[RMDB]
RNA sequence: GGGAACGACUCGAGUAGAGUCGAAAAGCGUACUACAGGUGGCAGAAGACAUGGCUCUGAGGUAGAAUAUCCCAAAUAGGAUAUUCCGAAUGCAGAGCCAACAGCUUCUGCGUAACAUCCUGUAUCGCAAACAUAAUUACGUUCGCGUAAUUAUGAAGUCGGUGGAUAGAUUCGUCUAUCCACCGACAAAAGAAACAACAACAACAAC
Reactivity to 2A3 in 0.01 (KOAc 150mM, MgCl2 10mM, bicine 150mM(pH8.5), 24C), signal-to-noise 1, nucleotides 027 to 156: g010c020g040u060a090c110u000a000c010a000g000g000u000g010g000c000a000g000a010a000g020a120c080a180u090g000g000c010u000c000u010g000a020g000g040u080a030g010a020a020u010a000u000c000c030c020a070a300a140u290a110g000g020a000u000a000u060u000c060c000g100a080a070u190g040c000a000g000a010g000c040c020a010a000c020a000g000c000u000u000c000u020g000c000g000u000a000a000c000a240u140c000c000u000g000u000a020u200c000g000c000a030a030a030c010a000u010a010a000u000u000a000c010g020u020u070c230g010c000g120u020a020a000u050u060a000u060g020a030a020
Structure probing data (2A3) for a 207-nucleotide construct. It was measured as part of the RMDB library RNAMAK.